[RMDB]
RNA sequence: GGGAACGACUCGAGUAGAGUCGAAAAUGUGGUGCUACCAAAGGAUGUUUAACAUUCUUUUUUGGAGAAACCGCAACUGGAAAGUCGACAACCAAACGUUUGUUAAAGUCUGCUAUCGGUGACCUGUUUGUCGAGACGGGUCAAACAAUUUUAACAGGGAUCAGUUAUUAUUCGUAAUAACUGAUCCAAAAGAAACAACAACAACAAC
Reactivity to DMS in 0.01 (KOAc 150mM, MgCl2 10mM, bicine 150mM(pH8.5), 24C), signal-to-noise 2, nucleotides 027 to 156: u000g070u010g030g060u000g010c060u000a200c020c020a040a000a010g020g010a010u000g030u000u000u000a160a160c020a040u000u000c000u000u010u000u000u020u070g020g020a300g020a130a180a030c020c020g010c020a070a160c090u000g020g000a140a100a110g010u010c040g000a070c030a100a140c030c020a050a120a150c160g010u000u000u000g010u000u000a030a110a080g020u000c060u000g010c020u000a130u000c090g000g010u000g020a040c020c000u000g000u010u000u000g050u020c250g000a220g020a030c000g010g030g020u000c010a040a050a100c040a070a030u000u000u000u000a060a110c030a090g010
Reactivity to 2A3 in 0.01 (KOAc 150mM, MgCl2 10mM, bicine 150mM(pH8.5), 24C), signal-to-noise 3, nucleotides 027 to 156: u050g000u030g010g000u010g020c010u060a240c010c000a000a000a000g010g010a000u030g050u060u300u140a130a070c030a020u030u040c000u050u120u030u010u020u000g050g010a050g040a230a080a000c000c000g000c000a010a030c070u030g040g070a120a040a030g090u030c030g010a030c030a070a040c070c050a040a150a060c060g050u050u120u160g000u040u170a030a100a050g020u030c060u030g060c040u060a050u170c060g100g030u040g010a000c000c000u000g010u030u070u080g080u050c030g010a000g000a020c000g010g010g010u000c000a000a000a000c000a020a040u090u080u140u200a080a070c100a060g140